An RNA of 177 nucleotides, treated with 2A3 and DMS and read out base by base.
[RMDB]
RNA sequence: GGGAACGACUCGAGUAGAGUCGAAAACGGUGGGCCGGACCGCAACACGUUCACCAAGGCCGUGCUGGCCGAGGCCGCCCCGGCCUACACCGCCGAACUGCAGCGGCAGCUGGCGAAGACCGGCACGCGAGACACUUGGAUUCGUCCAAGUGUCUCGAAAAGAAACAACAACAACAAC
Reactivity to 2A3 in 0.01 (KOAc 150mM, MgCl2 10mM, bicine 150mM(pH8.5), 24C), signal-to-noise 1, nucleotides 027 to 126: c010g010g010u040g010g030g050c000c000g020g030a070c030c080g040c040a070a040c110a010c090g060u150u120c080a070c160c030a090a050g030g020c000c030g010u110g030c080u170g020g000c030c010g030a050g010g010c020c010g040c030c040c000c000g000g010c030c000u040a040c020a040c050c000g000c000c000g030a050a030c020u060g000c040a060g000c030g130g020c030a050g000c030u010g040g000c060g110a110a010g040a100c010c040g000g000c020a010c060g040
Reactivity to DMS in 0.01 (KOAc 150mM, MgCl2 10mM, bicine 150mM(pH8.5), 24C), signal-to-noise 3, nucleotides 027 to 126: c060g030g030u010g010g000g010c010c040g010g000a100c080c150g020c110a070a050c160a150c160g000u010u000c120a190c070c050a100a260g010g020c050c030g000u000g000c120u010g000g020c010c000g010a170g020g000c070c060g000c080c100c040c040g010g010c000c000u000a020c090a050c120c090g020c010c010g020a060a110c050u000g000c110a130g000c070g000g000c060a040g000c050u000g000g020c000g000a170a100g000a070c030c000g020g000c000a080c160g020
Reactivities are given for positions 27 through 126. For DMS, 1,534 sequencing reads were counted. The RNA was probed in 150 mM KOAc, 10 mM MgCl2 and 150 mM bicine (pH 8.5) at 24 C. 2A3 is a SHAPE reagent: it acylates the 2'-hydroxyl of flexible nucleotides of all four kinds. For 2A3, 1,860 sequencing reads were counted. DMS adducts were read by reverse transcription with MarathonRT.